[RMDB]
Source: RMDB library RNAMAK, as collected in RNAgym. Chemical mapping of a 207-nucleotide RNA with 2A3. The RNA was probed in 150 mM KOAc, 10 mM MgCl2 and 150 mM bicine (pH 8.5) at 24 C. The 2A3 profile rests on 1,950 reads. For 2A3 the reverse transcriptase was SuperScript II with manganese. Values cover nucleotides 27 to 156.
RNA sequence: GGGAACGACUCGAGUAGAGUCGAAAACGCUGGGAAUUUAAGACAGAUGCGGUGUACCACAGGGAGUUACUGAAGCGCGCACGGUAACAUCGAUCUGUGGUACAUACAUCAAUGACGAAUUCCUGUGCUGAAGCGCGCACGGCAACCGAAAGGUGCGGGUCUUACUUGGGUUCGCCCAAGUAAGACCAAAAGAAACAACAACAACAAC
Reactivity to 2A3 in 0.01 (KOAc 150mM, MgCl2 10mM, bicine 150mM(pH8.5), 24C), signal-to-noise 2, nucleotides 027 to 156: c030g000c010u030g000g020g010a010a020u070u060u070a260a150g120a170c140a100g030a010u050g060c200g210g000u010g010u010a000c000c000a010c000a000g010g000g020a060g010u000u000a000c010u010g070a300a080g000c010g000c000g000c000a000c000g040g010u010a000a010c020a030u300c020g020a030u000c010u000g000u000g000g020u000a010c000a000u000a000c000a010u020c040a080a080u180g120a080c200g020a000a000u000u000c000c010u020g040u030g010c000u020g020a210a040g000c020g000c000g000c000a000c010g010g000c020a010a020c020c000g010a030a040a020g000g020u040g000c000g050